[RMDB]
Chemical mapping of a 177-nucleotide RNA with DMS. For DMS, 609 sequencing reads were counted. Values cover nucleotides 27 to 126.
RNA sequence: GGGAACGACUCGAGUAGAGUCGAAAAGAUAUGGACUAUGGAAGAAGCUGCGUCCCGAAGAACCUUUUUCAUCGGAAACGAUGAAAAAGGGGAGGGACGAACUACAGUGUAAACAUAGUCCUAAGUCCAUGAGUAGAUGCUUCGGCAUCUACUCAUGAAAAGAAACAACAACAACAAC
Reactivity to DMS in 0.01 (KOAc 150mM, MgCl2 10mM, bicine 150mM(pH8.5), 24C), signal-to-noise 1, nucleotides 027 to 126: g060a000u040a040u000g000g010a000c020u000a010u000g030g010a030a150g010a230a300g000c020u000g030c000g000u000c000c000c000g070a090a300g010a190a300c010c010u060u000u000u030u000c000a010u020c000g020g010a010a040a010c000g010a020u000g000a020a010a000a000a020g030g020g000g000a020g020g000g010a000c000g000a000a020c050u030a300c010a000g030u000g010u000a010a110a300c010a000u000a000g000u000c000c010u000a000a120g020u000c000
Conditions: 150 mM KOAc, 10 mM MgCl2 and 150 mM bicine (pH 8.5), 24 C. Values are in units of 0.01, from 0 to 300, in steps of 10. For DMS the reverse transcriptase was MarathonRT.